RNA sequence: GGGAACGACUCGAGUAGAGUCGAAAAGAUAUGGAUCACGAUCUCCUUGGAUUUAAGGUCUAGGGUUAACAUAUCGGAAACGAUAUGGGAGCCCUAGACCUUUGUCAGGAGAAAGUGAUCCUAAGUCGUUUCUUGAAAUGUUCGCAUUUCAAGAAACAAAAGAAACAACAACAACAAC
Reactivity to DMS in 0.01 (KOAc 150mM, MgCl2 10mM, bicine 150mM(pH8.5), 24C), signal-to-noise 2, nucleotides 027 to 126: g000a110u010a300u000g000g000a030u000c000a040c010g010a300u000c000u000c000c000u030u020g040g010a010u000u040u000a000a000g020g010u000c000u000a030g000g010g020u000u000a030a080c000a000u000a000u000c010g030g010a200a110a210c030g030a000u000a000u000g000g010g030a080g020c000c000c000u000a000g000a000c010c000u000u000u010g000u000c020a040g000g010a030g010a000a040a300g000u000g000a000u000c030c000u010a030a080g010u000c100